Source: RMDB library M2RFPK, as collected in RNAgym. Structure probing data (2A3) for a 207-nucleotide construct. 2A3 adducts were read by reverse transcription with SuperScript II with manganese. The 2A3 profile rests on 634 reads.

RNA sequence: GGGAACGACUCGAGUAGAGUCGAAAAACGGAUGGUACGCCAUCCGACCAUUGGGUAGAAGCGUUCAAUCAGCACCGUGACGGUGCAGAUGGGAAAUUGCCCAUGAUACGCACAAUACGUGGUGCGAAAAAGCCAUCGGUGUUCGCACCGAUGGCAACACCAGUUCACCGUUCGCGGUGAACUGGUGAAAAGAAACAACAACAACAAC
Reactivity to 2A3 in 0.01 (KOAc 150mM, MgCl2 10mM, bicine 150mM(pH8.5), 24C), signal-to-noise 1, nucleotides 027 to 156: a000c010g000g000a000u010g010g000u110a040c300g020c040c000a020u020c010c000g000a000c000c000a060u070u110g000g000g000u040a060g020a060a000g010c050g010u040u050c000a010a050u000c000a010g000c000a000c000c000g090u260g300a160c270g000g010u020g040c060a000g000a000u010g000g000g100a010a110a000u100u040g000c000c000c000a000u000g070a020u040a010c030g000c010a040c050a130a120u180a150c190g070u120g060g020u030g070c020g090a150a030a030a030a000g000c010c000a000u000c010g000g000u020g000u060u130c170g020c070a000c020c000g000a000u000g000g000c000a000a000